[RMDB]
RNA sequence: GGGAACGACUCGAGUAGAGUCGAAAAACUUAACCAUGUUUUCACUUUCAUGCCGCCGGCUAUCUCAGAACACUUCUACGUAUACCGCCUUUAGAUACUCUAGAUGCUCCGCGUGGUAUCGUUGAGGGUUAGGAGCAGUAUUCGUACUGCUCCUAACAAAAGAAACAACAACAACAAC
Reactivity to 2A3 in 0.01 (KOAc 150mM, MgCl2 10mM, bicine 150mM(pH8.5), 24C), signal-to-noise 3, nucleotides 027 to 126: a020c050u070u060a050a020c040c010a090u100g050u020u060u050u030c090a060c060u070u170u120c030a050u130g040c010c030g010c020c010g060g000c020u040a060u040c030u010c050a080g060a180a020c030a030c080u080u000c020u070a040c030g080u110a020u030a080c040c050g060c030c000u030u140u010a080g010a060u090a110c030u050c020u090a060g000a100u110g060c040u050c060c020g100c040g010u030g020g000u000a030u080c010g040u020u060g020a040g030g070
Reactivity to DMS in 0.01 (KOAc 150mM, MgCl2 10mM, bicine 150mM(pH8.5), 24C), signal-to-noise 4, nucleotides 027 to 126: a070c080u010u000a070a150c110c070a090u000g000u010u000u000u000c060a100c060u000u000u000c070a050u000g010c040c020g010c070c030g000g010c130u000a050u010c040u000c050a080g000a080a070c120a130c070u000u000c010u000a040c090g020u010a060u000a070c070c050g000c040c050u000u010u000a080g010a130u000a050c090u000c030u000a100g010a040u000g000c090u010c060c140g020c200g000u000g000g000u000a010u010c020g010u000u000g010a040g020g010